[RMDB]
RNA sequence: GGGAACGACUCGAGUAGAGUCGAAAACAUAUUCAUCAUAGUACUUUGUCCCUAAUGGCAGUGCAAAGUGGUCACUGAAUAAAUGCUUUCUGGUUGAAUUUUAACGGAUCCAUGAAUUUCUUGAUUUAUCAUCAUUUUACAGCUAGGGAAAUUAUGCACUCCUAGUCAGAUUCGUCUGACUAGGAGUAAAAGAAACAACAACAACAAC
Reactivity to 2A3 in 0.01 (KOAc 150mM, MgCl2 10mM, bicine 150mM(pH8.5), 24C), signal-to-noise 2, nucleotides 027 to 156: c040a040u240a070u100u110c060a090u000c020a040u110a110g040u050a090c060u090u120u110g040u040c010c000c010u060a150a120u100g060g000c000a000g010u000g020c020a130a000a060g060u020g050g040u080c050a040c070u030g000a030a020u090a120a060a050u050g030c020u040u060u010c040u020g030g110u050u040g060a120a140u110u100u130u170a060a000c050g050g000a030u020c020c010a030u030g070a070a040u070u070u060c040u030u080g050a040u100u040u170a070u080c020a020u000c010a010u060u030u060u050a050c010a000g040c010u040a030g080g000g000a000a050a060u020u050a020u040g030c050
Reactivity to DMS in 0.01 (KOAc 150mM, MgCl2 10mM, bicine 150mM(pH8.5), 24C), signal-to-noise 2, nucleotides 027 to 156: c060a170u000a020u030u000c030a100u020c050a120u020a140g020u000a050c030u000u000u000g020u010c020c010c020u000a100a120u000g010g000c060a110g000u010g030c010a030a090a110g020u000g000g000u000c030a060c070u010g000a050a020u000a030a090a120u000g010c030u010u000u000c010u000g050g000u010u000g030a080a150u000u000u000u010a030a110c090g020g010a060u000c010c010a030u000g000a090a090u000u000u000c000u010u000g000a080u000u010u000a050u010c040a070u000c010a080u000u000u000u000a080c030a100g020c050u030a090g030g000g010a050a080a070u000u000a110u020g030c120